RNA sequence: GGGAACGACUCGAGUAGAGUCGAAAAGAGAUCACUGUCGUUCACGUGGUCGACCUCACCGAGAGCAGCGACGGCGAGUUCGCCCAUCUCGGCACCGACGCCAUGCGCGACCGUCGUCGCGAGGGGCGCUCCUAGUGGUGUUCGCACCACUAGGAGCAAAAGAAACAACAACAACAAC
Reactivity to 2A3 in 0.01 (KOAc 150mM, MgCl2 10mM, bicine 150mM(pH8.5), 24C), signal-to-noise 8, nucleotides 027 to 126: g110a010g000a010u030c020a010c040u080g100u150c100g140u190u190c080a030c100g010u030g000g010u000c010g010a060c000c000u080c020a100c040c070g090a090g000a040g210c160a000g000c020g000a000c000g020g000c040g020a130g070u110u040c010g000c030c040c000a030u040c130u100c070g010g000c010a090c040c200g150a090c120g010c010c010a020u030g010c010g000c000g010a000c020c010g030u030c000g010u010c000g010c000g000a010g010g010g000g020c070
Reactivity to DMS in 0.01 (KOAc 150mM, MgCl2 10mM, bicine 150mM(pH8.5), 24C), signal-to-noise 4, nucleotides 027 to 126: g010a210g000a030u010c020a040c010u010g000u050c180g020u010u040c060a080c080g000u010g000g020u000c000g000a100c040c020u000c060a280c050c020g000a070g050a090g030c090a240g000c030g020a000c000g030g000c020g020a090g010u020u000c000g000c010c040c030a030u020c170u020c090g010g000c040a070c160c130g010a190c150g010c010c010a070u000g000c300g010c020g000a000c030c040g000u000c020g050u000c000g000c000g010a060g000g000g000g010c110